[RMDB]
RNA sequence: GGGAACGACUCGAGUAGAGUCGAAAAUUCAAGCGAUUCGUCGCUUGAACCUGAGGAGACUCAAGCAAAAUUGUUCCCUUUAGCUUUUGCUUUCCUCUUUUAAGUAGUAGUGCUUCGGCACUACUAAGUAAUACACUUCCUUCGGGAAGUGUAUUACAAAAGAAACAACAACAACAAC
Reactivity to DMS in 0.01 (KOAc 150mM, MgCl2 10mM, bicine 150mM(pH8.5), 24C), signal-to-noise 3, nucleotides 027 to 126: u000u000c000a010a000g010c000g010a030u000u020c230g010u000c000g020c010u000u000g000a000a050c010c000u000g010a020g000g010a030g010a030c000u000c050a010a010g020c010a080a050a060a100u010u020g000u030u000c000c010c010u000u010u010a180g000c020u000u000u000u010g000c160u000u000u000c000c010u000c010u000u000u000u010a090a160g000u000a010g000u000a010g010u000g000c010u000u010c190g030g000c000a000c000u000a000c000u000a010a070
Reactivity to 2A3 in 0.01 (KOAc 150mM, MgCl2 10mM, bicine 150mM(pH8.5), 24C), signal-to-noise 3, nucleotides 027 to 126: u010u010c000a000a000g000c000g030a020u030u090c200g050u030c000g140c020u000u010g010a000a000c000c000u030g010a000g000g000a010g010a000c010u000c060a030a000g000c010a000a060a200a290u280u300g010u050u050c010c000c000u010u030u010a010g010c010u060u000u030u040g020c040u010u040u020c010c020u040c100u080u090u070u160a150a100g030u050a010g000u000a000g010u010g010c010u020u050c260g070g020c000a000c000u010a000c000u000a010a000
Structure probing data (DMS and 2A3) for a 177-nucleotide construct. For DMS, 3,926 sequencing reads were counted. The 2A3 profile rests on 2,983 reads. Values cover nucleotides 27 to 126. The reactions ran in a buffer of 150 mM KOAc, 10 mM MgCl2 and 150 mM bicine (pH 8.5), at 24 C. DMS adducts were read by reverse transcription with MarathonRT.